RNA sequence: GGGAACGACUCGAGUAGAGUCGAAAAAUUGAUUUGAGACGUCGGCUUGCAGUGUUAACUUGGCUCUCAUGAACCUCUUUGAUCUUCCACAAAGGGUAGGCUACGGGUGAAACCUCUUAGGCUAAAAGAUGUAACUCUAGUUCGCUAGAGUUACAUCAAAAGAAACAACAACAACAAC
Reactivity to DMS in 0.01 (KOAc 150mM, MgCl2 10mM, bicine 150mM(pH8.5), 24C), signal-to-noise 6, nucleotides 027 to 126: a090u010u010g010a090u000u010u000g010a120g000a060c140g030u000c040g010g000c050u010u000g020c040a060g010u000g020u010u010a040a070c060u000u010g010g000c020u010c030u010c060a080u010g010a100a110c100c010u000c030u010u010u000g010a070u000c070u000u000c040c050a120c060a030a060a060g000g000g010u000a040g010g000c030u000a060c160g000g000g000u000g010a070a060a120c070c020u000c060u000u000a060g000g020c030u000a060a080a090a100
Reactivity to 2A3 in 0.01 (KOAc 150mM, MgCl2 10mM, bicine 150mM(pH8.5), 24C), signal-to-noise 4, nucleotides 027 to 126: a000u090u110g030a010u060u040u160g060a050g010a020c070g040u050c020g040g000c020u040u080g010c050a100g040u030g040u210u060a050a040c020u030u050g040g000c000u000c000u000c040a020u070g020a040a050c010c000u010c010u040u020u010g040a060u030c030u090u010c030c010a030c020a050a040a010g050g000g000u040a040g050g000c010u020a020c050g010g000g050u080g050a090a040a040c010c000u030c030u070u070a050g060g000c020u060a070a020a020a040